[RMDB]
RNA sequence: GGGAACGACUCGAGUAGAGUCGAAAAAUGCACGCCGGAGGCUCUGGAGCAUGUAGGUUUUUUGCGUGCGAUCGUAGCGUCUGCUCAUGGCCACGGCCGCCGUGACGUGGGGGAGAGCCAGGAGAGGGUCCAUGGUCGCCAUGGCGUCCCCGACGUGGCCAUGUCUAUAGUUCGCUAUAGACAUGGCAAAAGAAACAACAACAACAAC
Reactivity to DMS in 0.01 (KOAc 150mM, MgCl2 10mM, bicine 150mM(pH8.5), 24C), signal-to-noise 1, nucleotides 027 to 156: a110u000g010c030a070c010g000c040c050g020g010a140g040g020c010u030c070u030g020g000a230g030c040a030u000g050u010a140g040g020u000u000u010u010u000u000g030c000g000u010g020c050g000a040u000c060g040u000a130g020c050g020u010c130u010g010c040u020c020a130u010g030g000c020c000a100c000g020g030c020c010g030c000c020g010u010g000a040c070g030u000g000g000g010g000g000a160g000a130g010c000c000a030g020g010a180g000a130g030g000g000u010c100c090a100u010g060g020u020c000g050c020c020a040u010g010g000c030g000u000c000c010c000c000g010a040c040g000u000g000
Reactivity to 2A3 in 0.01 (KOAc 150mM, MgCl2 10mM, bicine 150mM(pH8.5), 24C), signal-to-noise 3, nucleotides 027 to 156: a020u150g020c050a010c030g000c010c020g030g030a100g000g000c030u040c100u250g080g010a040g040c030a050u070g080u200a130g040g110u080u030u050u060u210u210g030c040g010u030g030c040g020a170u140c080g050u090a050g040c020g080u020c080u080g040c000u000c040a020u040g010g000c000c030a070c050g000g000c020c040g020c000c000g060u120g060a120c010g000u040g010g000g030g030g000a090g000a000g040c000c010a010g030g050a090g020a100g030g040g020u000c050c020a060u070g000g090u130c030g010c030c030a050u020g000g000c010g040u000c010c000c010c010g010a020c020g010u060g120

An RNA of 207 nucleotides, treated with DMS and 2A3 and read out base by base. The data come from the RNA Mapping Database (RMDB), library OK3TST.